[RMDB]
Chemical mapping of a 177-nucleotide RNA with DMS. It was measured as part of the RMDB library TTRDEL.
RNA sequence: GGGAACGACUCGAGUAGAGUCGAAAAGAUAUGGAUUCCUGUAGGCUGCACUCGGAAACGAGUGGCAGCCGUAGAGAGGACUGUCCUAAGUCAAAUCGUUACGCUGCGUUCGCGCAGCGUAACGAAACACUAAACCUGUCUUCGGACAGGUUUAGUGAAAAGAAACAACAACAACAAC
Reactivity to DMS in 0.01 (KOAc 150mM, MgCl2 10mM, bicine 150mM(pH8.5), 24C), signal-to-noise 2, nucleotides 027 to 126: g000a070u010a240u000g000g000a180u010u000c000c000u000g010u000a140g030g020c010u000g000c020a000c020u000c000g030g000a080a090a180c000g010a000g010u000g010g020c000a010g000c000c000g000u030a040g010a120g020a020g000g010a140c300u000g000u000c000c010u010a060a100g010u000c030a100a070a120u010c000g030u000u000a010c000g010c000u000g030c010g020u000u000c180g010c000g010c020a000g000c000g020u000a000a000c000g000a010a000a110